Chemical mapping of a 170-nucleotide RNA with 2A3 and DMS.
High 2A3 reactivity points to a flexible backbone, as in loops and unpaired stretches.
The reactions ran in a buffer of 150 mM KOAc, 10 mM MgCl2 and 150 mM bicine (pH 8.5), at 24 C.
For DMS, 69,593 sequencing reads were counted.
For DMS the reverse transcriptase was MarathonRT.
For 2A3, 74,717 sequencing reads were counted.
It was measured as part of the RMDB library 15KLIB.
Values cover nucleotides 27 to 129.
RNA sequence: GGGAACGACUCGAGUAGAGUCGAAAAGGGAGACCCCGAGGAGGAUCUCCAGCUAAAGAGUGGAGGAAAUCUCGGAAAGCUUCCCCCAAGAAGAACUGGGACGCUCUCAAGAAGGAGGAGAUUUCCCGACCCUUGUGGUUCGCCACAAGGAAAAGAAACAACAACAACAAC
Reactivity to 2A3 in 0.01 (KOAc 150mM, MgCl2 10mM, bicine 150mM(pH8.5), 24C), signal-to-noise 9, nucleotides 027 to 129: g020g000g000a020g010a020c020c010c010c020g010a050g090g100a030g010g020a050u030c000u000c000c000a020g050c040u140a120a130a050g170a090g070u070g010g010a030g010g040a060a050a050u030c010u010c020g020g000a050a030a000g010c000u030u030c000c000c000c010c010a020a030g090a040a010g030a070a040c090u060g010g000g030a020c040g020c020u000c000u010c060a050a080g100a070a030g150g040a030g040g020a030g010a030u050u010u020c000c000c000g030a070c010
Reactivity to DMS in 0.01 (KOAc 150mM, MgCl2 10mM, bicine 150mM(pH8.5), 24C), signal-to-noise 9, nucleotides 027 to 129: g000g020g010a030g010a010c050c020c020c000g000a030g000g000a040g030g020a170u020c020u020c010c000a040g020c050u020a090a080a080g070a290g030u000g000g030a040g050g010a050a090a060u010c030u010c040g000g000a040a120a060g010c050u010u010c030c030c020c040c040a090a040g000a090a060g010a060a070c110u060g030g000g040a070c210g000c010u000c000u010c060a090a060g040a070a040g050g010a090g000g000a000g010a050u010u010u010c000c000c000g020a100c070